The data come from the RNA Mapping Database (RMDB), library OK2TRN. Structure probing data (DMS and 2A3) for a 177-nucleotide construct. For DMS the reverse transcriptase was MarathonRT. Conditions: 150 mM KOAc, 10 mM MgCl2 and 150 mM bicine (pH 8.5), 24 C.

RNA sequence: GGGAACGACUCGAGUAGAGUCGAAAAGACGAGCAGCGUCGCCUGCUGCCGCAGGCUCUCCGAGGCCGCCGCGCUCUGCUCGACGAGCGCGGCGUUCUGCUGCGUGAUGCUGUCGAGAUGGACGACAGUAGGAUGGCAUAUUCGUAUGCCAUCCUACAAAAGAAACAACAACAACAAC
Reactivity to DMS in 0.01 (KOAc 150mM, MgCl2 10mM, bicine 150mM(pH8.5), 24C), signal-to-noise 3, nucleotides 027 to 126: g000a120c100g020a240g010c010a030g010c020g020u000c180g010c040c020u000g010c040u000g000c260c300g010c030a030g000g000c020u010c060u010c030c080g020a050g000g020c130c020g020c000c030g020c000g050c000u000c010u010g010c030u000c060g010a030c100g010a030g010c000g030c000g000g000c010g000u000u000c010u000g010c020u000g010c040g010u000g010a120u010g010c130u000g000u000c010g010a070g010a090u010g000g000a120c040g010a050c120a070
Reactivity to 2A3 in 0.01 (KOAc 150mM, MgCl2 10mM, bicine 150mM(pH8.5), 24C), signal-to-noise 1, nucleotides 027 to 126: g090a020c090g030a040g070c000a010g000c000g040u120c080g020c000c010u010g020c030u180g080c060c090g010c020a010g000g030c010u040c010u040c030c020g020a030g030g000c000c000g030c040c010g030c010g000c030u070c060u190g020c030u030c010g040a050c000g000a010g070c030g050c060g040g000c010g010u000u030c000u020g010c000u010g010c000g020u100g070a130u300g050c130u070g020u020c020g000a010g010a100u140g070g000a030c060g000a000c040a060